The record gives the reactivity of an RNA of 207 nucleotides to 2A3. High 2A3 reactivity points to a flexible backbone, as in loops and unpaired stretches. The data come from the RNA Mapping Database (RMDB), library M2RFPK. Reactivities are given for positions 27 through 156.
[RMDB]
RNA sequence: GGGAACGACUCGAGUAGAGUCGAAAAGAAAGAAAGAAAGAAAUCUGACAGAAUGACGGAUUCGAUCGAUGUGGUCGGCGGGCCACCACGUCAUUCCUUCGCACUGUCUCCGGGCAGACCGCCAUAAAAAAGCGGAUCUACUUCGGUAGAUCCGCAACAUCUGUGUGCUGUUCGCAGCACACAGAUGAAAAGAAACAACAACAACAAC
Reactivity to 2A3 in 0.01 (KOAc 150mM, MgCl2 10mM, bicine 150mM(pH8.5), 24C), signal-to-noise 3, nucleotides 027 to 156: g060a010a020a010g100a050a060a010g060a030a190a020g080a010a150a020u100c130u130g020a060c020a090g020a030a010u040g020a020c030g000g080a060u150u180c110g050a090u200c100g050a040u190g010u000g020g000u030c040g000g020c000g010g010g010c010c000a020c010c010a020c010g010u020c010a000u020u030c010c000u160u200c080g060c020a040c080u010g000u010c020u010c080c080g030g020g030c010a000g020a060c000c000g000c040c010a040u220a050a120a000a010a040a000g000c000g000g000a000u000c000u010a000c000u000u030c110g040g010u010a000g000a000u010c000c000g000c000a000a000